[RMDB]
This 177-nucleotide RNA was probed chemically with 2A3 and DMS.
RNA sequence: GGGAACGACUCGAGUAGAGUCGAAAACGUCCCGUCAUUUAAGGGAGCCAGGCGACCUAAACGGUCGUGUCAUAUGUAGGCACCAGGUGCCAUCUCCCUGUGGCAAACCGCAGGCUCGGAGGGUCGGUCAUCGCAUGCGCUUCGGUGCGUGCGAUGAAAAAGAAACAACAACAACAAC
Reactivity to 2A3 in 0.01 (KOAc 150mM, MgCl2 10mM, bicine 150mM(pH8.5), 24C), signal-to-noise 3, nucleotides 027 to 126: c040g090u030c000c000c010g050u020c020a060u010u090u160a070a020g040g000g000a030g000c010c020a020g020g010c000g030a030c000c000u070a110a050a050c090g010g010u020c020g010u000g020u020c000a030u060a080u150g130u100a150g020g000c000a000c010c040a020g080g030u010g000c000c000a030u010c020u010c000c000c010u010g000u000g010g000c000a050a020a030c010c010g020c030a020g000g010c010u000c010g030g020a020g010g000g010u010c010g010g020
Reactivity to DMS in 0.01 (KOAc 150mM, MgCl2 10mM, bicine 150mM(pH8.5), 24C), signal-to-noise 9, nucleotides 027 to 126: c230g000u010c010c000c000g020u020c060a040u020u020u040a050a040g000g000g000a020g010c240c090a040g000g000c000g010a010c000c000u000a070a100a100c240g010g000u000c010g010u000g000u030c060a110u040a100u020g010u010a090g010g010c000a020c010c140a110g010g020u000g000c010c000a040u020c010u000c010c010c000u000g000u000g010g000c030a050a090a040c080c040g010c070a080g000g010c030u000c030g000g010a070g010g000g000u000c020g000g010

Values cover nucleotides 27 to 126. Conditions: 150 mM KOAc, 10 mM MgCl2 and 150 mM bicine (pH 8.5), 24 C. Values are in units of 0.01, from 0 to 300, in steps of 10. For 2A3 the reverse transcriptase was SuperScript II with manganese.